[RMDB]
The record gives the reactivity of an RNA of 177 nucleotides to 2A3 and DMS. For DMS, 866 sequencing reads were counted. The reactions ran in a buffer of 150 mM KOAc, 10 mM MgCl2 and 150 mM bicine (pH 8.5), at 24 C.
RNA sequence: GGGAACGACUCGAGUAGAGUCGAAAAAGAUGCAUGACCUCAAUUGCAGUUACAACAUUUGUCCCUACUGUGCAUCUAGACUAACCUCAGAUGGGCUUGCUAGGCAUGUGAUACAAUGCCCUAAGCGCCGCAGGCCAUGAUUCGUCAUGGCCUGCGGAAAAGAAACAACAACAACAAC
Reactivity to 2A3 in 0.01 (KOAc 150mM, MgCl2 10mM, bicine 150mM(pH8.5), 24C), signal-to-noise 2, nucleotides 027 to 126: a050g030a010u000g010c000a020u000g080a100c040c010u000c030a100a150u180u130g010c010a030g020u080u130a090c070a170a020c070a250u110u130u300g130u080c000c010c000u060a110c030u100g030u030g020c010a010u020c020u000a050g120a060c020u040a080a070c060c000u130c010a010g010a140u100g000g040g070c030u050u030g020c000u040a060g060g000c000a000u070g040u070g110a010u020a140c060a110a000u060g100c010c010c000u080a170a040g000c040g000
Reactivity to DMS in 0.01 (KOAc 150mM, MgCl2 10mM, bicine 150mM(pH8.5), 24C), signal-to-noise 2, nucleotides 027 to 126: a060g010a030u000g010c000a070u000g010a140c060c020u020c060a090a150u000u010g000c090a060g020u000u000a050c140a090a060c050a040u000u010u000g000u000c010c020c050u000a120c090u010g000u000g010c010a020u000c000u000a080g020a090c150u000a070a140c100c100u010c010a020g010a130u000g000g010g020c070u000u010g060c040u000a070g000g020c010a030u050g040u000g000a140u010a130c190a030a050u010g020c010c040c030u010a070a120g000c020g010